Structure probing data (2A3 and DMS) for a 207-nucleotide construct. DMS adducts were read by reverse transcription with MarathonRT. The reactions ran in a buffer of 150 mM KOAc, 10 mM MgCl2 and 150 mM bicine (pH 8.5), at 24 C. Source: RMDB library RNAMAK, as collected in RNAgym.
[RMDB]
RNA sequence: GGGAACGACUCGAGUAGAGUCGAAAAGGCACGUUCGCGUGCCCAUAACGGGGUCUAAAGUGUCCAGCCUUUUGACGAGCUGAAGCCUCCACGGCUCGAUAAGGAACUACUGGACCCUUUAGACGGAGGCACCCUUAACACAGUUUUCGAACUGUAAAAGGUACGUAAUAUUCGUAUUACGUACCUUAAAAGAAACAACAACAACAAC
Reactivity to 2A3 in 0.01 (KOAc 150mM, MgCl2 10mM, bicine 150mM(pH8.5), 24C), signal-to-noise 7, nucleotides 027 to 156: g010g000c000a000c010g020u050u140c280g030c020g120u010g000c000c010c010a060u140a100a060c090g030g000g050g000u000c000u000a000a000a000g010u010g010u020c010c000a040g050c070c020u070u060u110u180g260a160c080g000a000g000c000u020g020a080a020g010c010c000u000c010c000a010c020g010g000c000u000c010g020a030u030a060a010g050g000a060a080c080u180a060c010u300g000g000a000c020c000c000u000u000u000a000g000a000c010g000g000a000g000g020c000a020c020c000c000u070u140a210a010c040a010c020a110g020u030u020u060u100c160g080a040a010c000u020g070u090a060a170
Reactivity to DMS in 0.01 (KOAc 150mM, MgCl2 10mM, bicine 150mM(pH8.5), 24C), signal-to-noise 3, nucleotides 027 to 156: g010g040c030a000c010g010u000u010c250g020c040g020u000g040c000c010c020a040u000a060a110c080g000g020g060g020u000c020u000a020a020a030g010u010g000u000c010c020a030g020c030c100u000u000u010u020g020a240c170g000a060g010c010u000g000a050a090g030c020c000u000c020c020a300c030g020g010c000u000c010g000a150u000a050a070g030g000a120a120c100u000a180c000u000g010g020a050c020c040c000u010u000u000a020g000a110c030g020g010a040g030g030c020a150c030c000c020u020u010a090a150c140a040c010a030g020u000u000u000u000c250g000a040a020c020u000g020u000a050a090